[RMDB]
RNA sequence: GGGAACGACUCGAGUAGAGUCGAAAAAUACGGACCCUGGAUGUCGGCUCGCUCACUGACUUUUGCCGUUUCAGUGCUUCGUAGCAAUAUGGAUUUACCAGCAUCGCUUUAUUCUCAACAAGGGUGACUACUCUCACACAUUCGUGUGUGAGAGUAGAAAAGAAACAACAACAACAAC
Reactivity to DMS in 0.01 (KOAc 150mM, MgCl2 10mM, bicine 150mM(pH8.5), 24C), signal-to-noise 3, nucleotides 027 to 126: a100u000a070c080g000g000a080c020c080c010u000g010g000a040u020g050u010c050g010g010c030u000c070g000c150u000c040a080c080u010g010a060c120u000u010u010u000g000c080c100g000u000u010u030c030a050g010u000g020c110u000u000c030g040u000a040g000c070a080a100u000a060u000g010g010a150u000u000u000a110c010c000a050g000c060a060u010c030g020c030u010u000u000a070u020u000c000u000c020a100a070c150a090a090g000g000g010u000g020a190
Reactivity to 2A3 in 0.01 (KOAc 150mM, MgCl2 10mM, bicine 150mM(pH8.5), 24C), signal-to-noise 3, nucleotides 027 to 126: a000u160a020c000g020g060a010c020c020c010u000g080g030a040u040g040u110c030g060g000c020u020c020g050c010u040c060a050c030u050g060a050c000u110u080u090u160g070c000c000g030u040u040u010c030a020g010u010g050c050u010u050c040g010u080a020g000c030a060a050u080a130u130g080g020a080u050u080u180a160c020c010a000g030c010a040u020c010g030c000u020u060u080a070u120u040c030u000c000a030a150c030a100a060g060g000g000u040g010a010
The record gives the reactivity of an RNA of 177 nucleotides to DMS and 2A3. Conditions: 150 mM KOAc, 10 mM MgCl2 and 150 mM bicine (pH 8.5), 24 C. It was measured as part of the RMDB library OK2TST. For DMS, 2,854 sequencing reads were counted.